[RMDB]
RNA sequence: GGGAACGACUCGAGUAGAGUCGAAAAGACGCCUUCGGUGAACUUUGGCGGCAAAUCGUCCACAUCUCGCACGUUUAUCGUGAUCGUGGUGUUGGCCUGGUUGGCUGGUGUACCUCGAUCCCAGGCGCGCUGACGCUGCAUUCGUGCAGCGUCAGCGAAAAGAAACAACAACAACAAC
Reactivity to 2A3 in 0.01 (KOAc 150mM, MgCl2 10mM, bicine 150mM(pH8.5), 24C), signal-to-noise 2, nucleotides 027 to 126: g050a010c080g020c030c000u100u070c020g160g100u100g020a020a070c020u020u090u180g140g010c000g000g040c030a010a050a070u090c040g010u030c000c000a040c000a010u000c010u020c050g020c000a050c050g030u030u100u250a260u300c000g020u030g040a120u080c010g040u010g040g000u000g060u000u090g000g000c000c030u140g030g020u090u010g120g000c050u060g030g080u090g010u090a110c000c000u000c040g030a020u020c000c000c020a050g080g000c040g000

Source: RMDB library OK1LIB, as collected in RNAgym. This 177-nucleotide RNA was probed chemically with 2A3. The RNA was probed in 150 mM KOAc, 10 mM MgCl2 and 150 mM bicine (pH 8.5) at 24 C. Values cover nucleotides 27 to 126. The 2A3 profile rests on 920 reads.